[RMDB]
RNA sequence: GGGAACGACUCGAGUAGAGUCGAAAACGAAGGAAAGCUUGACCAGCUAAUCUUCUGCAACGCCAUUACGAGGACUGCCCUUAGAGGCUCAUGGCGAUAGGACACCCCGCCGGUCGGUCAGCUGCUUAUACCCGUGCACGGUUCGCCGUGCACGGAACACAGACAAUUAGUUCGCUAAUUGUCUGUGAAAAGAAACAACAACAACAAC
Reactivity to 2A3 in 0.01 (KOAc 150mM, MgCl2 10mM, bicine 150mM(pH8.5), 24C), signal-to-noise 3, nucleotides 027 to 156: c040g010a030a010g020g060a300a120a000g000c020u050u040g000a020c000c000a000g000c010u020a030a090u020c010u030u010c030u070g040c040a150a010c000g000c010c010a010u130u170a070c090g040a050g070g110a130c120u070g030c000c020c010u090u180a110g060a150g090g000c000u040c020a010u020g000g000c030g020a010u080a080g050g010a030c010a080c050c020c000c000g070c050c050g020g040u050c020g000g000u040c030a020g030c020u110g000c050u140u040a040u110a230c000c000c030g000u000g020c020a000c000g030g000u020u040c140g010c060c000g030u000g000c000a000c000g000g000a000a000
Reactivity to DMS in 0.01 (KOAc 150mM, MgCl2 10mM, bicine 150mM(pH8.5), 24C), signal-to-noise 1, nucleotides 027 to 156: c040g010a020a080g030g010a110a240a060g040c010u000u000g000a050c040c050a270g000c030u030a070a150u010c000u000u020c020u010g010c040a090a220c000g020c000c010a070u010u010a090c130g010a130g050g010a120c010u000g000c040c010c040u000u000a110g010a150g000g040c010u010c070a080u000g020g020c000g010a100u020a110g050g000a170c080a100c070c020c000c030g060c000c060g050g090u000c020g020g040u010c020a260g000c020u000g000c020u000u000a170u020a090c060c000c030g020u000g010c000a000c050g010g000u000u000c300g010c020c010g000u000g000c000a000c000g000g010a030a010
This 207-nucleotide RNA was probed chemically with 2A3 and DMS. The DMS profile rests on 1,804 reads. The data come from the RNA Mapping Database (RMDB), library M2RFPK. For 2A3, 1,604 sequencing reads were counted. For 2A3 the reverse transcriptase was SuperScript II with manganese. The RNA was probed in 150 mM KOAc, 10 mM MgCl2 and 150 mM bicine (pH 8.5) at 24 C.